[RMDB]
An RNA of 177 nucleotides, treated with DMS and 2A3 and read out base by base. Reactivities are given for positions 27 through 126. Source: RMDB library RFMREP, as collected in RNAgym. Conditions: 150 mM KOAc, 10 mM MgCl2 and 150 mM bicine (pH 8.5), 24 C.
RNA sequence: GGGAACGACUCGAGUAGAGUCGAAAAAGCAUGGUACGAAUGCUGGUCAGGAUUACAUCUUUCUUAAUGGCUAUCAUCCUGGCUAUUUAUUUGCCAUGCCACCCUAAAAGCAAAGGUUCGCCUUUGCGAUAAUUGAUAAGUUCGCUUAUCAAUUAUCAAAAGAAACAACAACAACAAC
Reactivity to DMS in 0.01 (KOAc 150mM, MgCl2 10mM, bicine 150mM(pH8.5), 24C), signal-to-noise 9, nucleotides 027 to 126: a100g000c000a000u000g010g010u000a060c200g020a020a010u000g010c200u000g010g010u000c000a010g000g000a020u000u000a070c090a030u000c100u000u010u010c240u010u010a100a050u000g010g010c150u010a080u010c200a020u000c010c010u000g000g000c000u000a010u000u010u000a020u000u000u010g000c000c000a010u000g000c010c040a080c030c000c010u010a060a080a090a160g010c000a000a010a010g010g010u000u010c260g020c010c000u000u000u000g000c000
Reactivity to 2A3 in 0.01 (KOAc 150mM, MgCl2 10mM, bicine 150mM(pH8.5), 24C), signal-to-noise 9, nucleotides 027 to 126: a000g010c000a010u010g000g010u090a060c100g070a040a010u030g010c010u010g010g010u000c000a000g010g000a010u020u040a040c020a060u030c060u060u290u040c060u100u300a150a080u130g050g010c050u070a040u180c020a010u010c040c000u000g000g000c000u000a000u000u020u000a010u000u020u010g010c000c000a000u000g000c010c000a040c010c000c000u070a160a180a040a020g000c000a000a000a000g020g020u030u070c130g080c030c000u000u000u000g000c000